Source: RMDB library OK1LIB, as collected in RNAgym.
Chemical mapping of a 177-nucleotide RNA with 2A3 and DMS.
The reactions ran in a buffer of 150 mM KOAc, 10 mM MgCl2 and 150 mM bicine (pH 8.5), at 24 C.
Reactivities are rounded to 0.1 and cut off at 0 and 3.
RNA sequence: GGGAACGACUCGAGUAGAGUCGAAAAGAAGAGAGGAAGAUUUAGGGGAAGAAGAUAACAAUAUUCACGCGGUCUUCCCUGUUACGUGUGUCGACACAAUGAUUGUUAUCAAAACUAAAUAUGAGAACGGAGCGUAUAGGUUCGCCUAUACGCUCCGAAAAGAAACAACAACAACAAC
Reactivity to 2A3 in 0.01 (KOAc 150mM, MgCl2 10mM, bicine 150mM(pH8.5), 24C), signal-to-noise 2, nucleotides 027 to 126: g110a000a000g140a000g010a000g060g070a100a060g040a150u070u090u100a080g000g060g000g000a000a070g000a040a040g040a020u020a040a020c010a070a040u050a070u030u150c040a050c070g000c000g050g000u000c000u030u050c010c000c000u010g050u160u130a040c010g000u000g000u000g040u090c110g060a000c010a000c030a090a070u120g120a000u040u000g000u020u010a000u020c010a000a130a000a070c020u060a030a050a060u270a200u160g110a120g040a050a000
Reactivity to DMS in 0.01 (KOAc 150mM, MgCl2 10mM, bicine 150mM(pH8.5), 24C), signal-to-noise 2, nucleotides 027 to 126: g000a080a030g040a020g010a130g000g010a040a050g000a080u000u020u040a030g030g000g000g020a030a070g020a100a080g000a000u030a000a060c020a000a000u020a010u080u030c000a000c090g000c000g020g000u000c140u040u000c000c000c000u000g000u030u010a050c100g000u010g030u010g000u040c120g000a200c040a060c270a100a020u030g040a020u000u000g000u000u020a030u020c000a100a020a060a110c160u000a060a170a080u010a100u040g000a200g000a130a160